[RMDB]
The data come from the RNA Mapping Database (RMDB), library OK2TRN. This 177-nucleotide RNA was probed chemically with 2A3 and DMS. The reactions ran in a buffer of 150 mM KOAc, 10 mM MgCl2 and 150 mM bicine (pH 8.5), at 24 C. 2A3 adducts were read by reverse transcription with SuperScript II with manganese. Reactivities are given for positions 27 through 126.

RNA sequence: GGGAACGACUCGAGUAGAGUCGAAAACGAUGCGCCGCGAUUACGAUAUAUAUUAGCCGCGCGUAAUUAAUCGGCAUGCAUCGAUCGGCUACGAUCGGCCGAUUAUAAUGCCGAUGCCGGCAUUACGCCGCAGAACAGAAUUCGUUCUGUUCUGCGGAAAAGAAACAACAACAACAAC
Reactivity to 2A3 in 0.01 (KOAc 150mM, MgCl2 10mM, bicine 150mM(pH8.5), 24C), signal-to-noise 2, nucleotides 027 to 126: c040g010a030u040g050c040g000c020c010g020c040g010a000u070u060a030c040g020a000u020a010u030a020u040a120u290u280a080g060c030c040g080c000g010c000g000u030a030a040u040u140a060a050u050c020g000g000c010a020u090g000c020a030u060c020g020a010u010c000g040g000c040u090a110c160g210a230u120c080g040g000c010c020g000a000u010u010a030u000a010a050u030g000c010c000g030a060u120g160c100c000g040g000c020a000u020u020a070c070g020
Reactivity to DMS in 0.01 (KOAc 150mM, MgCl2 10mM, bicine 150mM(pH8.5), 24C), signal-to-noise 2, nucleotides 027 to 126: c100g010a080u000g000c020g030c020c110g030c180g000a090u000u000a030c090g000a130u020a150u010a140u050a070u000u010a080g040c010c100g010c110g000c010g020u010a020a060u000u000a110a060u010c000g000g000c000a020u010g030c120a070u000c070g020a020u000c000g000g020c020u000a100c190g000a100u010c160g000g000c000c030g000a010u000u000a010u000a030a010u000g000c000c050g000a080u000g010c100c010g000g000c040a030u000u000a040c130g010